[RMDB]
RNA sequence: GGGAACGACUCGAGUAGAGUCGAAAAGCACAACCAUCCAUAGGAAAGUUAUGCGUUCACAAUAUAUAUUAGUAAAACAUAUGUAUAGUAACACUUUCCUACGCUAGUUCAAGCUAGAUCAGGUUCAGAUUAUGCACAAAUUCGUUUGUGCAUAAUCAAAAGAAACAACAACAACAAC
Reactivity to 2A3 in 0.01 (KOAc 150mM, MgCl2 10mM, bicine 150mM(pH8.5), 24C), signal-to-noise 7, nucleotides 027 to 126: g020c020a030c020a110a040c010c010a030u050c030c020a040u040a020g000g030a000a020a000g020u130u160a150u300g100c050g020u060u080c070a020c010a070a010u010a000u000a000u000a010u110u130a070g050u150a080a130a140a040c020a020u040a010u030g010u010a020u010a080g020u020a040a010c000a000c030u000u020u010c000c000u010a020c030g010c010u020a010g010u110u220c100a110a030g030c010u010a010g010a110u110c080a040g060g000u080u090c010a000
Reactivity to DMS in 0.01 (KOAc 150mM, MgCl2 10mM, bicine 150mM(pH8.5), 24C), signal-to-noise 6, nucleotides 027 to 126: g030c080a080c150a040a050c020c040a090u010c120c040a150u000a010g000g000a010a010a010g010u010u010a150u020g010c140g010u000u000c130a050c020a090a040u000a010u000a000u000a010u010u000a220g000u010a110a090a060a150c050a020u000a020u000g000u000a010u000a080g010u000a050a030c020a090c010u000u000u000c000c000u000a030c110g000c020u000a020g010u000u010c220a090a140g000c020u000a020g000a090u010c160a120g010g010u000u000c170a110
This 177-nucleotide RNA was probed chemically with 2A3 and DMS. Conditions: 150 mM KOAc, 10 mM MgCl2 and 150 mM bicine (pH 8.5), 24 C. For DMS the reverse transcriptase was MarathonRT. It was measured as part of the RMDB library OK2TST. DMS (dimethyl sulfate) methylates the pairing face of unpaired adenines and cytosines. Values are in units of 0.01, from 0 to 300, in steps of 10.